RNA sequence: GGGAACGACUCGAGUAGAGUCGAAAAGAAACAGGGCCAGUCACAGCAGCAGGAGGAAUGUAGGAUGGAGAGCUUGGCCAGGCAAGGACAUGCAGGGGGAGCAGCCUGCACAAGUCAGCAAGCCAGAGAAGACAGGCAGACCCUUGUUUGGGACCUGCAUGUCAUUCCGAUUCGUCGGAAUGACAUGAAAAGAAACAACAACAACAAC
Reactivity to DMS in 0.01 (KOAc 150mM, MgCl2 10mM, bicine 150mM(pH8.5), 24C), signal-to-noise 2, nucleotides 027 to 156: g030a160a070a120c030a090g020g030g020c050c030a100g020u000c070a100c070a160g000c100a090g030c050a090g030g010a110g000g000a030a090u010g040u000a060g110g020a100u000g000g000a090g000a100g030c080u010u000g020g090c010c030a050g020g010c020a120a120g000g000a040c050a080u000g010c030a050g000g040g030g060g020a160g000c040a190g000c010c000u020g040c040a080c000a020a090g010u000c060a080g020c050a060a090g020c010c020a180g020a150g030a090a120g030a080c050a060g020g000c000a120g000a190c060c000c000u000u010g020u000u000u000g030g020g000a090c020c080u000g000
Reactivity to 2A3 in 0.01 (KOAc 150mM, MgCl2 10mM, bicine 150mM(pH8.5), 24C), signal-to-noise 3, nucleotides 027 to 156: g060a000a090a000c060a010g000g000g000c020c020a050g050u080c040a030c010a100g030c020a010g010c020a010g030g060a010g030g040a050a090u140g030u090a030g000g060a060u080g010g010a050g000a000g040c040u070u040g050g000c000c030a030g030g000c020a000a070g040g020a020c020a040u050g000c030a020g010g010g000g000g010a040g040c020a010g010c000c000u020g000c010a010c020a040a040g040u050c000a010g020c040a110a030g020c010c010a000g010a000g020a110a030g040a010c020a020g000g000c030a020g060a110c010c000c000u040u050g040u100u100u040g020g000g060a100c000c020u040g020